[RMDB]
The data come from the RNA Mapping Database (RMDB), library TTRDES. Structure probing data (DMS and 2A3) for a 177-nucleotide construct. The RNA was probed in 150 mM KOAc, 10 mM MgCl2 and 150 mM bicine (pH 8.5) at 24 C. For 2A3, 5,166 sequencing reads were counted.
RNA sequence: GGGAACGACUCGAGUAGAGUCGAAAAGAUAUGGAAUGGCAAGCUUUUGACGCUCGGCGUGUCGGAAACGACACGGGAGAGCGAUAAGCUUGCAUUCCUAAGUCAAAGGAGCUCUUCGGAGCUCCAACACUCGUAAGAUCUUCGGAUCUUACGAGUGAAAAGAAACAACAACAACAAC
Reactivity to DMS in 0.01 (KOAc 150mM, MgCl2 10mM, bicine 150mM(pH8.5), 24C), signal-to-noise 3, nucleotides 027 to 126: g000a020u000a300u000g000g000a010a010u010g020g010c010a010a010g000c000u000u000u000u010g010a230c070g020c010u000c020g010g010c040g040u010g020u000c000g000g000a080a040a190c000g020a010c000a010c000g000g010g040a200g000a010g010c000g020a050u010a010a030g020c000u000u000g010c000a010u000u000c000c000u000a030a170g010u010c010a120a180a230g010g000a030g000c000u000c000u000u010c250g020g000a020g020c000u000c000c010a020a090
Reactivity to 2A3 in 0.01 (KOAc 150mM, MgCl2 10mM, bicine 150mM(pH8.5), 24C), signal-to-noise 4, nucleotides 027 to 126: g020a010u050a020u140g020g040a030a010u040g300g100c020a000a020g010c030u220u150u280u300g300a210c160g000c010u020c030g080g300c000g020u010g000u000c000g000g010a030a010a010c000g000a000c010a010c020g030g080g050a300g000a000g000c030g030a020u040a030a000g000c010u000u000g000c000a000u000u000c000c000u000a080a000g040u000c030a010a120a220g030g000a000g000c010u020c000u100u170c300g180g000a010g000c000u000c020c000a000a000